RNA sequence: GGGAACGACUCGAGUAGAGUCGAAAAUUGUGAAGGAAGAUGAAUGCUUUGAUUAUGCAUGAAUCCAUAAUGAUAAAGUGCUAUUGAAUGAUCAAGUAAUUUGUAAGGUUUUUAUUAUCUUCGCAAGCUCCACACAGAAUUUCGAUUCUGUGUGGAGAAAAGAAACAACAACAACAAC
Reactivity to DMS in 0.01 (KOAc 150mM, MgCl2 10mM, bicine 150mM(pH8.5), 24C), signal-to-noise 3, nucleotides 027 to 126: u010u000g020u000g000a040a010g030g010a110a150g020a050u010g020a030a010u000g010c010u000u010u020g010a040u020u000a050u000g000c020a010u000g000a270a020u000c030c150a160u060a160a100u030g010a010u000a030a080a120g000u000g010c020u010a140u010u010g020a060a090u010g010a030u010c010a020a020g000u000a030a060u000u000u010g010u020a040a130g000g010u010u010u000u040u010a050u010u000a100u000c000u000u000c010g000c010a020a020g000
Reactivity to 2A3 in 0.01 (KOAc 150mM, MgCl2 10mM, bicine 150mM(pH8.5), 24C), signal-to-noise 5, nucleotides 027 to 126: u030u020g030u000g010a020a000g020g000a070a110g040a120u080g030a030a030u030g020c010u060u050u050g040a040u020u090a030u150g000c000a020u070g020a030a010u000c020c000a110u300a140a080u220g050a000u010a030a170a010g050u010g000c030u060a050u200u200g120a140a090u100g020a050u020c010a010a010g020u150a050a260u000u060u070g090u080a080a090g040g010u050u010u050u050u000a130u060u110a060u040c000u000u000c000g000c000a020a020g020
An RNA of 177 nucleotides, treated with DMS and 2A3 and read out base by base. Reactivities are rounded to 0.1 and cut off at 0 and 3. The reactions ran in a buffer of 150 mM KOAc, 10 mM MgCl2 and 150 mM bicine (pH 8.5), at 24 C. For 2A3 the reverse transcriptase was SuperScript II with manganese. Values cover nucleotides 27 to 126. DMS adducts were read by reverse transcription with MarathonRT. The data come from the RNA Mapping Database (RMDB), libraries RFM100 and RFMREP.